[RMDB]
RNA sequence: GGGAACGACUCGAGUAGAGUCGAAAACAGUCAAGGCGACCAGUGCCCUUGUGGUUGGCGGCGCGCCUACCGUAGGUGGCGAGGUGAUGCUGUACAUCGGAGGUGAGCGGGUAAGCGUCGGUGUCACGACUGCCGACACCUCGGCCACGAUUGCAACCGAAGGUAGUGUGUUCGCACACUACCUUCGAAAAGAAACAACAACAACAAC
Reactivity to 2A3 in 0.01 (KOAc 150mM, MgCl2 10mM, bicine 150mM(pH8.5), 24C), signal-to-noise 1, nucleotides 027 to 156: c060a030g140u190c080a050a100g010g030c010g110a000c000c000a000g070u030g140c010c010c000u040u030g050u010g000g060u090u140g030g000c010g100g060c220g000c070g000c130c000u070a070c000c000g080u040a050g010g050u140g040g000c000g000a000g050g010u040g000a040u120g000c030u040g040u130a030c000a110u000c040g090g000a030g040g000u010g050a110g100c100g010g080g040u140a110a100g060c050g000u000c030g000g010u070g190u220c090a070c170g000a000c030u040g020c020c000g000a000c000a000c010c000u000c000g010g000c000c000a100c050g070a050u000u140g000c050a130a000c070